[RMDB]
RNA sequence: GGGAACGACUCGAGUAGAGUCGAAAAGAUAUGGACUUAGAGAGCAUCGAGUCUAUGACAUGCCUCGCAGUCGGAAACGACUGGACAGGCAACAGCAUAUGACUCGAUGCUCUCUAAGUCCUAAGUCGUUUAAAAUCAUGUUCGCAUGAUUUUAAACAAAAGAAACAACAACAACAAC
Reactivity to DMS in 0.01 (KOAc 150mM, MgCl2 10mM, bicine 150mM(pH8.5), 24C), signal-to-noise 3, nucleotides 027 to 126: g010a110u010a300u000g020g010a030c000u000u000a000g000a010g000a020g020c010a010u000c000g010a020g010u000c000u000a010u000g000a060c090a290u000g000c000c000u000c260g000c010a000g020u000c000g000g000a130a100a280c000g000a000c010u010g010g010a190c190a010g020g020c010a020a070c270a170g020c000a010u000a020u020g010a000c000u000c000g000a000u000g000c000u000c000u000c000u000a000a000g000u000c000c000u000a020a080g000u010c100
Notes
This 177-nucleotide RNA was probed chemically with DMS. The reactions ran in a buffer of 150 mM KOAc, 10 mM MgCl2 and 150 mM bicine (pH 8.5), at 24 C. For DMS, 4,106 sequencing reads were counted. For DMS the reverse transcriptase was MarathonRT.